RNA sequence: GGGAACGACUCGAGUAGAGUCGAAAAGAUAUGGAUGAUGAGAGAUCGAUAAGUCCGUGUCGGAAACGACAUAGGACUUUUGACGAUUGGUAUCAUCCUAAGUCAAAAGUCGUAGUUCGCUACGACAGUAUAAAUGCCAGUUCGCUGGCAUUUAUACAAAAGAAACAACAACAACAAC
Reactivity to 2A3 in 0.01 (KOAc 150mM, MgCl2 10mM, bicine 150mM(pH8.5), 24C), signal-to-noise 4, nucleotides 027 to 126: g040a010u040a000u130g000g010a000u010g020a000u050g080a160g050a050g000a300u020c060g040a090u060a290a010g010u000c000c000g000u000g010u010c000g000g000a070a020a030c020g010a010c030a020u120a300g020g000a010c000u010u000u020u060g080a040c020g010a010u010u060g060g060u140a000u020c000a000u000c010c000u010a080a030g060u020c030a030a050a090a120g010u000c010g000u000a000g010u040u160c280g000c160u010a000c000g000a000c000a000
Reactivity to DMS in 0.01 (KOAc 150mM, MgCl2 10mM, bicine 150mM(pH8.5), 24C), signal-to-noise 7, nucleotides 027 to 126: g010a030u010a300u010g000g010a010u000g000a030u000g010a210g010a270g010a000u000c000g010a150u000a020a020g010u000c000c000g010u000g000u000c000g010g000a070a060a150c000g010a010c000a010u000a070g040g000a010c000u000u000u010u000g010a160c090g010a030u000u010g010g020u020a040u000c020a000u000c000c000u010a030a110g010u000c020a090a090a130a120g010u000c000g010u000a010g000u000u010c300g020c010u000a020c000g000a010c010a070